RNA sequence: GGGAACGACUCGAGUAGAGUCGAAAAGGCUAUACAGGUGAGUUAUCUGCCACGAAAAUGUAGCAUCAGGAAACUAAUCACCACUGCUAACAACACUCUAUCCACAGGUGAACGAUGCGAGACGAAGUCAUAGUCCCGACUUCGGUCGGGACUAUGAAAAAGAAACAACAACAACAAC
Reactivity to DMS in 0.01 (KOAc 150mM, MgCl2 10mM, bicine 150mM(pH8.5), 24C), signal-to-noise 3, nucleotides 027 to 126: g030g010c020u030a090u000a040c110a080g000g010u000g020a110g030u000u000a110u000c070u010g000c050c000a080c150g020a040a030a090a060u000g000u000a050g000c020a050u000c090a120g020g010a090a060a090c080u000a100a110u010c040a090c020c010a120c120u000g000c020u000a030a060c150a050a080c060a060c090u000c020u000a110u000c020c030a010c050a110g000g010u000g000a060a130c110g020a060u000g000c020g010a100g020a060c130g010a080a130g000
Reactivity to 2A3 in 0.01 (KOAc 150mM, MgCl2 10mM, bicine 150mM(pH8.5), 24C), signal-to-noise 1, nucleotides 027 to 126: g010g000c050u060a070u030a150c040a060g000g010u090g050a050g010u020u050a040u050c030u080g030c050c030a030c080g160a140a070a030a020u260g020u030a010g030c000a010u030c020a020g000g120a030a060a020c050u040a160a000u050c000a000c040c000a010c050u050g000c040u140a090a060c040a040a000c030a060c020u060c030u020a070u020c040c000a040c040a000g000g030u030g050a030a020c040g030a040u030g000c020g020a030g040a020c040g050a030a000g050
The record gives the reactivity of an RNA of 177 nucleotides to DMS and 2A3. The data come from the RNA Mapping Database (RMDB), library OK2TRN. Conditions: 150 mM KOAc, 10 mM MgCl2 and 150 mM bicine (pH 8.5), 24 C.